[RMDB]
RNA sequence: GGGAACGACUCGAGUAGAGUCGAAAAUUUGAUGAGUUACUUAACAUUGCAUCAUGUUUAAUUGACUCUUAUGACGGUCAACUCUUAAUUAAACCAUGGAUUAUCACAGUUUAUCUCACAAUCAUAAGCAUCUUUUCCAGUUCGCUGGAAAAGAUGCAAAAGAAACAACAACAACAAC
Reactivity to 2A3 in 0.01 (KOAc 150mM, MgCl2 10mM, bicine 150mM(pH8.5), 24C), signal-to-noise 5, nucleotides 027 to 126: u070u050u050g020a010u010g020a040g050u120u070a060c040u210u160a110a030c090a140u050u290g060c010a030u020c010a000u050g060u030u000u060a110a120u020u060g000a000c000u000c020u140u250a060u110g050a060c020g020g020u000c010a000a060c010u030c000u010u150a140a120u080u040a070a060a030c030c000a100u160g060g000a080u100u070a080u200c050a010c040a100g010u030u060u070a040u000c050u030c030a090c020a050a120u170c080a110u090a160a010